[RMDB]
RNA sequence: GGGAACGACUCGAGUAGAGUCGAAAAGAAAGAGCACGUGCCGGGCAGCCACGCACCACGGGGUAAGAGCUGAACGCAUCUAAGCUCGAAACCCACCUGGAAACGAGGAACCACCGAGGCCACUCCUCGCUGAGUUAAUUUUCGAAUUAACUCAGCGAAAAGAAACAACAACAACAAC
Reactivity to 2A3 in 0.01 (KOAc 150mM, MgCl2 10mM, bicine 150mM(pH8.5), 24C), signal-to-noise 5, nucleotides 027 to 126: g110a020a060a010g060a010g000c030a010c060g040u070g030c020c000g010g040g010c010a020g030c020c000a040c030g030c020a030c010c010a030c070g020g000g000g000u020a060a020g000a000g000c000u010g020a170a020c060g000c050a020u020c020u070a030a010g010c000u000c000g000a050a020a020c010c000c000a060c020c020u020g040g030a110a080a020c050g020a070g030g020a020a010c020c010a010c020c020g040a050g030g000c010c000a020c020u020c010c010u000
Reactivity to DMS in 0.01 (KOAc 150mM, MgCl2 10mM, bicine 150mM(pH8.5), 24C), signal-to-noise 3, nucleotides 027 to 126: g000a080a130a060g010a100g040c050a050c050g020u000g000c000c010g000g000g040c040a100g000c040c040a100c110g050c070a070c100c060a070c230g000g000g000g000u010a070a190g000a010g020c000u000g000a110a110c180g020c060a010u010c050u020a210a040g040c000u000c000g010a090a100a080c000c000c000a090c040c070u000g000g000a050a050a090c090g000a030g010g010a140a070c060c000a000c030c070g030a160g000g090c100c040a090c010u000c000c000u010
Structure probing data (2A3 and DMS) for a 177-nucleotide construct. It was measured as part of the RMDB library RFM100. Values cover nucleotides 27 to 126. For DMS, 2,902 sequencing reads were counted. Conditions: 150 mM KOAc, 10 mM MgCl2 and 150 mM bicine (pH 8.5), 24 C.